The record gives the reactivity of an RNA of 177 nucleotides to 2A3 and DMS. The DMS profile rests on 10,298 reads. For 2A3, 6,852 sequencing reads were counted.
[RMDB]
RNA sequence: GGGAACGACUCGAGUAGAGUCGAAAAACUUUCUGCUGUCUUGGGUGCAUUGGAGCCUUGCCUUGCUGCUCUACCUCCACCAUGCCAAGGUAAGCGGUCGUGCCCUGCUGGCGCCGCGGGCCGCUGCGGCACUACAUACUUUCGAGUAUGUAGUGCCAAAAGAAACAACAACAACAAC
Reactivity to 2A3 in 0.01 (KOAc 150mM, MgCl2 10mM, bicine 150mM(pH8.5), 24C), signal-to-noise 4, nucleotides 027 to 126: a010c020u050u100u040c030u050g040c020u030g020u050c010u020u060g040g020g010u080g030c040a110u020u140g070g030a020g030c010c020u040u030g000c010c020u070u150g030c110u050g010c000u040c020u040a080c010c010u000c020c010a020c030c010a050u160g090c030c010a050a020g020g030u040a120a010g020c000g000g010u040c030g050u060g050c010c010c000u070g050c050u080g050g000c020g040c080c040g300c070g030g040g020c030c020g010c000u020g000c050
Reactivity to DMS in 0.01 (KOAc 150mM, MgCl2 10mM, bicine 150mM(pH8.5), 24C), signal-to-noise 5, nucleotides 027 to 126: a080c130u000u000u000c040u000g010c030u000g010u000c050u000u000g010g010g010u000g010c100a120u000u000g020g000a090g010c090c050u010u000g010c030c040u000u000g020c110u000g010c040u000c080u000a110c110c010u000c010c020a060c160c040a050u000g020c040c040a060a060g000g010u000a070a060g020c050g000g010u000c050g020u000g010c020c010c030u000g010c060u010g010g000c050g010c050c050g010c080g010g000g010c030c030g010c040u000g010c170

The reactions ran in a buffer of 150 mM KOAc, 10 mM MgCl2 and 150 mM bicine (pH 8.5), at 24 C.